[RMDB]
RNA sequence: GGGAACGACUCGAGUAGAGUCGAAAAAGCUGCUCCUCCGCCUCUCCACCUUCUCGGUCUUCUUCGCGGCUGCAGAGGUCCUGGAAGAUGGCGCAGACGCGCGACGCAUGUCUGUCUAGGUCGCUGGCCUAAAUCGUACCUUCGGGUACGAUUUAGGAAAAGAAACAACAACAACAAC
Reactivity to DMS in 0.01 (KOAc 150mM, MgCl2 10mM, bicine 150mM(pH8.5), 24C), signal-to-noise 2, nucleotides 027 to 126: a090g000c090u000g020c010u000c020c040u000c070c030g000c020c000u000c040u030c020c010a090c060c040u000u000c050u010c130g000g010u000c000u020u010c020u000u010c090g000c140g020g000c020u000g000c090a000g000a050g000g020u000c090c050u020g010g040a070a020g000a070u000g000g000c050g000c090a030g010a140c080g000c040g000c050g010a100c090g000c060a050u040g010u000c010u000g020u010c000u010a040g000g010u010c020g020c010u000g000g000
Reactivity to 2A3 in 0.01 (KOAc 150mM, MgCl2 10mM, bicine 150mM(pH8.5), 24C), signal-to-noise 4, nucleotides 027 to 126: a000g080c050u060g010c020u030c010c010u030c010c020g020c000c000u010c000u000c000c000a020c000c010u080u080c010u040c030g060g000u000c000u090u020c010u060u050c080g050c060g130g000c050u080g010c040a010g020a020g060g020u070c000c030u040g020g010a040a050g030a070u140g050g000c020g000c020a010g040a100c050g000c010g010c010g060a060c020g050c090a110u150g040u000c040u060g150u050c030u030a030g040g020u040c000g040c100u060g040g040